[RMDB]
RNA sequence: GGGAACGACUCGAGUAGAGUCGAAAAGAAUGGAACAGCACCUUACUAAUCUUUGUCAGUGCUGUGGCUCUGUUUUCAAUACACAAGCCGAACCAAGGAUUGCUUAACUCCCUGAUUCCUUAUUCCUCCAUCCUUCUUGUUAUCAGUCCUUGCCACCGGGACCAUGAGUAUUCGUACUCAUGGUCCCAAAAGAAACAACAACAACAAC
Reactivity to DMS in 0.01 (KOAc 150mM, MgCl2 10mM, bicine 150mM(pH8.5), 24C), signal-to-noise 1, nucleotides 027 to 156: g050a060a030u010g030g000a090a000c040a040g000c000a020c060c000u010u010a200c080u020a080a180u000c140u030u000u040g020u010c180a070g030u000g020c020u010g020u010g010g030c010u000c040u000g030u000u010u000u030c100a080a160u010a040c100a110c090a010a010g010c000c000g010a070a070c110c040a010a030g040g000a050u000u000g000c070u000u000a060a070c050u000c020c010c000u010g010a150u010u000c020c030u020u010a210u000u000c000c010u000c040c020a090u010c000c010u000u010c040u000u000g000u000u010a030u000c030a000g020u000c000c020u020u010g010c020c040a230c250c030
Reactivity to 2A3 in 0.01 (KOAc 150mM, MgCl2 10mM, bicine 150mM(pH8.5), 24C), signal-to-noise 1, nucleotides 027 to 156: g020a020a090u120g000g030a050a050c000a000g010c000a040c040c070u120u070a040c090u060a090a260u200c170u120u130u080g040u050c050a000g000u000g000c000u000g000u050g000g000c010u060c050u010g060u010u020u060u170c130a160a060u010a060c050a000c030a060a000g000c010c010g050a030a040c030c030a030a010g030g020a020u000u030g020c070u090u090a050a080c030u090c040c010c000u070g090a190u110u100c040c030u000u060a060u120u060c010c000u000c000c010a000u020c000c010u100u080c090u020u110g020u090u010a000u070c000a030g050u020c010c030u090u020g010c100c000a080c060c030
Description: Chemical mapping of a 207-nucleotide RNA with DMS and 2A3. DMS adducts were read by reverse transcription with MarathonRT. Source: RMDB library OK3TST, as collected in RNAgym.